The record gives the reactivity of an RNA of 177 nucleotides to 2A3 and DMS. For DMS, 1,062 sequencing reads were counted. Source: RMDB library M2PK50, as collected in RNAgym. Conditions: 150 mM KOAc, 10 mM MgCl2 and 150 mM bicine (pH 8.5), 24 C. The 2A3 profile rests on 2,620 reads.

RNA sequence: GGGAACGACUCGAGUAGAGUCGAAAACGACAUGGCUUCGGCCAUGUCGAAAGGACGAGUGAGACCGAAACGGAGGUAGGUCCAACUACCUUCUCACUCAUAAAAUCCGUUUGUUCGCAAACGGAAAGCUACGUGAAGAGUUCGCUCUUCACGUAGCAAAAGAAACAACAACAACAAC
Reactivity to 2A3 in 0.01 (KOAc 150mM, MgCl2 10mM, bicine 150mM(pH8.5), 24C), signal-to-noise 2, nucleotides 027 to 126: c010g020a000c010a010u000g000g000c010u090u050c180g070g000c010c000a000u000g000u000c000g000a020a000a010g080g010a050c120g000a010g000u000g000a000g020a110c090c060g110a180a160a030c120g090g040a010g010g020u000a000g000g000u020c070c010a060a150c010u000a000c000c000u080u010c000u020c010a000c000u000c000a010u230a020a100a000a050u020c010c000g010u000u000u030g030u040u020c220g000c070a000a010a000c000g000g000a010a040a000
Reactivity to DMS in 0.01 (KOAc 150mM, MgCl2 10mM, bicine 150mM(pH8.5), 24C), signal-to-noise 2, nucleotides 027 to 126: c000g000a000c020a020u000g010g030c000u010u000c300g030g000c000c000a000u000g000u000c000g000a000a090a050g010g010a030c280g010a030g000u000g020a030g000a160c280c040g000a100a080a120c180g010g010a030g020g000u000a000g010g010u010c170c190a080a190c020u000a000c010c000u000u000c000u000c010a010c010u010c000a130u000a060a060a160a120u000c000c000g010u010u000u000g000u000u000c300g000c010a000a020a030c000g010g030a010a030a050